[RMDB]
RNA sequence: GGGAACGACUCGAGUAGAGUCGAAAACUUGUUGAUUAUCUCGACUGGCGACACAAAGACUUUGUUAAUAAGUCAUUCAACAAAAACCAUCUAACAAAUGUUGCUUGGCUUGCUGUACCUAAUGGCGACUCAAUAUCAAACGAGCAAAUUGAUAGUACUCUCCAAAGUCUUUCGAGACUUUGGAGAGAAAAGAAACAACAACAACAAC
Reactivity to 2A3 in 0.01 (KOAc 150mM, MgCl2 10mM, bicine 150mM(pH8.5), 24C), signal-to-noise 2, nucleotides 027 to 156: c030u000u010g040u100u000g040a090u110u250a130u130c090u000c060g070a050c070u040g040g070c010g070a010c000a030c040a100a140a030g040a030c000u100u120u010g050u140u190a260a090u150a200a000g010u000c010a010u010u040c000a020a000c000a000a140a060a060a060c010c000a030u140c050u220a030a080c010a140a080a060u090g040u040u060g050c000u050u050g000g000c010u000u040g010c050u050g070u080a050c050c020u090a060a040u050g010g000c010g040a030c010u020c030a060a070u030a070u190c060a090a100a000c100g030a000g030c050a020a030a200u000u010g060a030u040a080g120u270a150